[RMDB]
RNA sequence: GGGAACGACUCGAGUAGAGUCGAAAAAGAAGGCAGAUUUGACCGGACAACAUAAGAUGAUGCUCCUGCUCUCCAGUGCUCUUAGGAUUGGCUCUGUGCACAUGGAUGUAUCCAGAAUAUUGGUCAAACUUAUCAUGGCGUUCGCGCCAUGAUAAGUAAAAGAAACAACAACAACAAC
Reactivity to DMS in 0.01 (KOAc 150mM, MgCl2 10mM, bicine 150mM(pH8.5), 24C), signal-to-noise 2, nucleotides 027 to 126: a070g020a100a090g010g020c040a050g010a160u000u000u010g040a050c040c040g020g020a090c070a080a110c060a080u020a040a090g040a300u000g010a090u000g020c020u000c030c010u000g000c030u000c050u000c020c000a060g000u000g000c020u000c040u000u000a050g000g020a100u020u000g020g010c010u010c030u000g000u010g030c050a000c070a080u000g020g010a030u000g020u000a030u020c020c030a070g000a060a050u000a170u000u020g020g000u000c010a060a050
Reactivity to 2A3 in 0.01 (KOAc 150mM, MgCl2 10mM, bicine 150mM(pH8.5), 24C), signal-to-noise 2, nucleotides 027 to 126: a000g140a030a020g030g020c020a040g030a130u060u050u060g010a010c030c000g040g010a030c020a110a050c030a120u190a130a050g040a100u120g030a020u060g020c000u020c020c000u020g030c000u020c030u030c050c000a030g010u020g020c010u000c000u090u090a040g040g040a150u070u160g060g020c020u000c010u000g020u040g010c010a020c010a100u030g000g000a030u060g030u040a050u000c020c020a030g110a180a060u230a100u140u110g010g070u060c000a090a060

Conditions: 150 mM KOAc, 10 mM MgCl2 and 150 mM bicine (pH 8.5), 24 C.
An RNA of 177 nucleotides, treated with DMS and 2A3 and read out base by base.
The 2A3 profile rests on 1,307 reads.
Reactivities are given for positions 27 through 126.
The DMS profile rests on 1,799 reads.